[RMDB]
Annotation:
The record gives the reactivity of an RNA of 170 nucleotides to 2A3 and DMS. Values cover nucleotides 27 to 129. 2A3 adducts were read by reverse transcription with SuperScript II with manganese. The reactions ran in a buffer of 150 mM KOAc, 10 mM MgCl2 and 150 mM bicine (pH 8.5), at 24 C. It was measured as part of the RMDB library 15KLIB.
RNA sequence: GGGAACGACUCGAGUAGAGUCGAAAACGGCUACUCUUCUUUUCCUUUUCUCGUCUUCCUCGGUCAGCCUCCUGAGUUCCUCUUCUUCCUCCCUGCUGAGGUUCUUCCCUCCCCCGGCGAGCUGCUUACGGCAUUUGCUUCGGCAAAUGCAAAAGAAACAACAACAACAAC
Reactivity to 2A3 in 0.01 (KOAc 150mM, MgCl2 10mM, bicine 150mM(pH8.5), 24C), signal-to-noise 4, nucleotides 027 to 129: c010g030g010c020u030a020c000u020c010u050u050c020u050u070u060u070c010c010u050u070u040u020c090u020c020g070u000c030u080u070c030c010u020c010g000g030u030c010a030g050c000c010u040c000c020u030g040a050g050u020u030c010c010u010c000u060u010c010u050u040c000c000u010c020c010c000u010g020c010u040g030a050g040g020u060u020c000u000u000c000c020c000u030c030c000c000c000c000g000g000c010g010a040g000c040u040g010c010u070u080a030c050g030
Reactivity to DMS in 0.01 (KOAc 150mM, MgCl2 10mM, bicine 150mM(pH8.5), 24C), signal-to-noise 4, nucleotides 027 to 129: c100g040g040c030u020a000c100u000c050u000u030c040u000u040u020u040c040c030u000u030u030u040c050u010c080g040u000c000u020u040c080c060u020c050g030g020u000c100a070g000c080c000u030c000c000u030g030a060g030u000u000c030c040u030c000u020u020c050u010u010c050c030u020c000c000c000u040g030c100u020g020a120g000g060u040u030c080u030u020c030c060c010u010c040c010c000c000c070g040g040c030g000a100g030c060u010g030c050u040u020a110c110g020